[RMDB]
RNA sequence: GGGAACGACUCGAGUAGAGUCGAAAAAUGAAUCUAUGGAGUAUAGAAAGGGUUUGGCUAAAAAGUAUGGCCUUAAAAAACAGCUCAUUUCAGGGAUUCACUUUAAUUUUUCAUUUAAGGAAGAGCAAAAUAGUAUGGACUUCGGUCCAUACUAUUUAAAAGAAACAACAACAACAAC
Reactivity to 2A3 in 0.01 (KOAc 150mM, MgCl2 10mM, bicine 150mM(pH8.5), 24C), signal-to-noise 4, nucleotides 027 to 126: a000u030g000a000a000u000c000u010a080u070g050g060a050g040u090a110u050a180g170a040a150a060g000g020g020u050u050u070g010g030c030u110a050a040a000a210a080g140u120a180u250g000g020c000c010u000u070a120a170a030a000a000a010c040a000g040c010u010c040a100u000u060u000c010a000g030g010g040a010u010u030c010a040c070u060u060u010a060a130u070u050u010u030u110c050a070u080u120u110a080a040g020g010a030a040g000a000g060c040a090
Reactivity to DMS in 0.01 (KOAc 150mM, MgCl2 10mM, bicine 150mM(pH8.5), 24C), signal-to-noise 5, nucleotides 027 to 126: a060u010g010a010a010u000c010u000a070u010g000g010a030g020u010a140u060a090g000a070a120a090g000g000g010u000u000u010g020g000c030u010a050a070a110a120a190g020u030a050u010g000g000c010c010u020u010a000a050a080a120a050a050c110a100g000c030u000c060a050u010u000u010c010a020g010g020g000a030u000u000c020a040c090u000u010u000a040a050u020u010u000u010u010c020a060u020u020u030a080a070g010g000a050a020g010a040g010c080a060